[RMDB]
Chemical mapping of a 177-nucleotide RNA with 2A3 and DMS.
The 2A3 profile rests on 1,581 reads.
High DMS reactivity at an A or C suggests that its Watson-Crick edge is free.
Conditions: 150 mM KOAc, 10 mM MgCl2 and 150 mM bicine (pH 8.5), 24 C.
The DMS profile rests on 3,450 reads.
It was measured as part of the RMDB library M2PK90.
RNA sequence: GGGAACGACUCGAGUAGAGUCGAAAAGAAGAUGAUGUGUAGGAUAGGUGGGAGGCUUUGAAGUGUGGACGCCAGUCUGCAUGGAGCCGACCUUGAAAUACCACCCUUUAAUGAAAAUCAAAUACAACAUAUUUAAGCACUUCGGUGCUUAAAUAUGAAAAGAAACAACAACAACAAC
Reactivity to 2A3 in 0.01 (KOAc 150mM, MgCl2 10mM, bicine 150mM(pH8.5), 24C), signal-to-noise 2, nucleotides 027 to 126: g080a050a010g040a030u120g000a020u030g080u000g020u050a010g030g070a030u010a030g000g010u000g030g060g020a110g000g000c000u300u140u030g050a070a030g000u000g010u020g030g000a000c010g000c040c000a020g010u020c010u000g000c010a000u010g000g000a000g000c000c010g000a000c000c000u000u010g010a000a000a000u010a010c000c020a000c000c000c000u000u080u110a170a140u190g050a080a050a020a080u100c020a030a090a030u240a120c030a140a010
Reactivity to DMS in 0.01 (KOAc 150mM, MgCl2 10mM, bicine 150mM(pH8.5), 24C), signal-to-noise 4, nucleotides 027 to 126: g010a120a090g010a090u000g010a040u000g000u000g000u000a030g000g010a110u000a020g020g020u000g000g000g010a130g020g010c000u000u020u010g000a100a130g010u000g020u000g000g010a010c010g020c150c250a080g010u000c010u000g000c000a000u000g010g000a020g020c000c010g010a060c290c040u000u000g000a050a110a080u000a070c010c000a000c000c000c020u000u000u000a060a090u000g000a060a060a090a060u000c080a030a080a090u010a090c140a090a200